Description:
This 207-nucleotide RNA was probed chemically with DMS and 2A3. The DMS profile rests on 2,791 reads. For DMS the reverse transcriptase was MarathonRT. For 2A3 the reverse transcriptase was SuperScript II with manganese.
RNA sequence: GGGAACGACUCGAGUAGAGUCGAAAAUGUCGGCAAGCUCUAUAUAUGGACACUUACGAAGGGUUUUGGUUGUUCUGUAUCUCAAGCCGACUUUGAGUAUUUGAGGAAAAUACGACAGAAAAAACAAAUAGACCGGUAUCCUUCGGGAUACCGGUAAGGGUAUAGUUAUGUUCGCAUAACUAUACCCAAAAGAAACAACAACAACAAC
Reactivity to DMS in 0.01 (KOAc 150mM, MgCl2 10mM, bicine 150mM(pH8.5), 24C), signal-to-noise 2, nucleotides 027 to 156: u000g000u000c000g040g090c010a070a130g030c000u010c030u010a080u000a080u000a070u020g000g020a030c020a050c030u010u000a140c060g000a120a060g050g000g010u000u000u000u000g020g040u000u010g030u000u000c060u000g010u000a060u000c000u010c010a070a300g000c010c010g050a030c010u030u010u000g020a300g010u000a040u000u010u010g010a200g020g000a270a070a020a050u000a050c010g010a210c050a140g000a000a010a070a120a070a090c090a030a060a080u000a090g000a130c040c010g040g000u000a010u000c000c000u010u020c300g070g010g000a030u000a000c020c010g010g000u000a000a060
Reactivity to 2A3 in 0.01 (KOAc 150mM, MgCl2 10mM, bicine 150mM(pH8.5), 24C), signal-to-noise 1, nucleotides 027 to 156: u080g000u000c000g000g010c060a090a000g000c020u020c010u110a040u000a020u000a020u100g020g000a020c010a010c000u050u150a030c110g200a210a160g070g130g010u100u090u150u210g090g000u070u110g000u020u000c010u030g040u130a260u280c090u010c090a040a040g000c000c000g000a000c000u000u010u030g010a000g000u000a000u040u030u040g090a130g000g180a090a080a000a000u020a010c030g050a020c020a040g210a020a130a000a040a000a000c010a010a090a030u130a080g060a010c000c020g030g000u000a000u000c000c000u060u020c070g000g000g010a000u000a000c000c000g000g000u000a000a000
The RNA was probed in 150 mM KOAc, 10 mM MgCl2 and 150 mM bicine (pH 8.5) at 24 C.
Reactivities are given for positions 27 through 156.